The record gives the reactivity of an RNA of 177 nucleotides to DMS.
[RMDB]
RNA sequence: GGGAACGACUCGAGUAGAGUCGAAAAGUCCGUCAACACAAGAAGAAAUUUGCGUCUUUCAGUCUGACUUCUGAUGUAGAAGAGAGAGUUAUGGAAUUAAUCACCUCUGGUGAUGUUUAUAAUAGGAUCCCACUGGAUGGUUCGCCAUCCAGUGGGAAAAAGAAACAACAACAACAAC
Reactivity to DMS in 0.01 (KOAc 150mM, MgCl2 10mM, bicine 150mM(pH8.5), 24C), signal-to-noise 1, nucleotides 027 to 126: g020u000c020c050g050u000c070a080a110c050a020c070a030a170g020a210a050g010a120a150a200u000u000u000g000c130g010u020c020u000u030u000c030a100g000u010c040u000g050a080c010u000u000c020u000g000a170u000g000u020a010g000a050a030g000a110g020a080g020a120g000u010u000a040u020g000g040a020a080u010u030a130a070u030c000a010c020c000u000c190u010g030g050u000g000a010u000g020u000u020u000a010u010a050a060u020a080g020g000a270
Source: RMDB library OK2TST, as collected in RNAgym.
The DMS profile rests on 630 reads.
The reactions ran in a buffer of 150 mM KOAc, 10 mM MgCl2 and 150 mM bicine (pH 8.5), at 24 C.